This 207-nucleotide RNA was probed chemically with 2A3. Source: RMDB library M2RFOK, as collected in RNAgym. The 2A3 profile rests on 501 reads. Conditions: 150 mM KOAc, 10 mM MgCl2 and 150 mM bicine (pH 8.5), 24 C.
[RMDB]
RNA sequence: GGGAACGACUCGAGUAGAGUCGAAAACGCAAAGCUGCAGCGCGGCGCUCUGGAGGCCUUGCCCCGCGCACUGCUCUUUACAUGGCCCGACGUGAGGGCACUUCGCGGGCAGUGCUGAGGCCUCGUGAAACUGCCCCUAAGUUCGCUUAGGGGCAAAUGUUGCUUAUUUCUUCGGAAAUAAGCAACAAAAAGAAACAACAACAACAAC
Reactivity to 2A3 in 0.01 (KOAc 150mM, MgCl2 10mM, bicine 150mM(pH8.5), 24C), signal-to-noise 1, nucleotides 027 to 156: c080g030c080a130a110a230g050c090u240g040c110a160g080c040g050c040g140g000c010g020c020u060c080u120g200g010a010g000g050c010c010u050u070g030c000c000c000c020g000c000g020c000a000c000u000g000c000u000c060u020u220u060a020c010a090u070g090g000c000c000c000g160a200c070g160u220g070a120g000g000g050c030a060c000u020u050c030g010c010g010g000g010c000a020g030u010g000c000u030g000a000g000g000c050c000u000c000g000u000g000a150a140a010c000u010g020c000c000c060c000u000a000a000g020u060u130c220g030c180u000u000a000g000g000g020g010c000a030a000a010